[RMDB]
RNA sequence: GGGAACGACUCGAGUAGAGUCGAAAAGAAUACGCGUCGACGAUAAUGUUCGUAUGGCUAUGUAGAGUUAUACUUGAGUACUUUUUUUAAGUACUCUUUACAUUUUGGAUUCAUUAUCGUCGUUGCAGGGUUCCGUAGUGUUCGCAUUACGGAACCCAAAAGAAACAACAACAACAAC
Reactivity to 2A3 in 0.01 (KOAc 150mM, MgCl2 10mM, bicine 150mM(pH8.5), 24C), signal-to-noise 9, nucleotides 027 to 126: g100a060a060u200a090c100g000c000g010u010c000g000a000c000g000a000u000a000a000u010g010u030u050c030g010u040a020u050g040g000c020u060a070u260g180u190a100g040a020g200u050u030a040u020a060c050u050u050g000a000g000u000a010c000u000u050u060u050u030u100u260a000a000g000u000a000c000u000c000u010u040u010a030c010a050u060u110u100u260g140g030a090u070u050c000a000u000u000a000u000c000g000u000c000g000u000u020g000c010a010
Reactivity to DMS in 0.01 (KOAc 150mM, MgCl2 10mM, bicine 150mM(pH8.5), 24C), signal-to-noise 2, nucleotides 027 to 126: g010a100a090u040a050c160g000c000g000u000c000g000a010c000g000a010u000a000a010u000g020u000u020c030g000u000a000u000g010g010c000u010a090u020g020u070a100g020a030g000u000u020a040u000a040c040u020u000g000a030g010u000a000c000u000u000u000u030u040u050u030a010a020g020u000a000c000u010c000u000u000u010a080c060a160u020u020u060u050g000g000a110u030u000c000a000u000u000a000u000c000g010u000c000g020u000u020g010c000a140